[RMDB]
RNA sequence: GGGAACGACUCGAGUAGAGUCGAAAAGGGGUCAAGUCGGGAGCUAGACAUGCUGCCCAUCUGAAGCCUCCACGGAUGGGACAGCAACAGCUAGCUUCUCUAGCGUGCUUGACGGAGGCACCCAAAACGUGGACUGGGAGUUCGCUCCCAGUCCACGGAAUCCAACUGUCUUCGGACAGUUGGAUUCAAAAGAAACAACAACAACAAC
Reactivity to 2A3 in 0.01 (KOAc 150mM, MgCl2 10mM, bicine 150mM(pH8.5), 24C), signal-to-noise 1, nucleotides 027 to 156: g140g000g020g030u000c030a010a000g040u060c080g020g000g000a010g010c010u010a010g000a130c090a290u160g010c000u010g010c030c010c000a000u000c000u020g010a080a040g000c020c000u000c000c000a050c010g000g000a000u000g010g000g280a300c020a040g000c020a040a070c070a040g060c010u010a000g000c000u010u000c020u040c000u030a060g060c040g150u220g080c040u020u000g000a000c070g010g000a000g000g000c040a040c010c000c000a010a050a000a040c000g010u000g000g000a000c000u000g000g060g000a000g020u090u220c230g090c150u010c010c000c000a000g000u010c000c000a000c000g000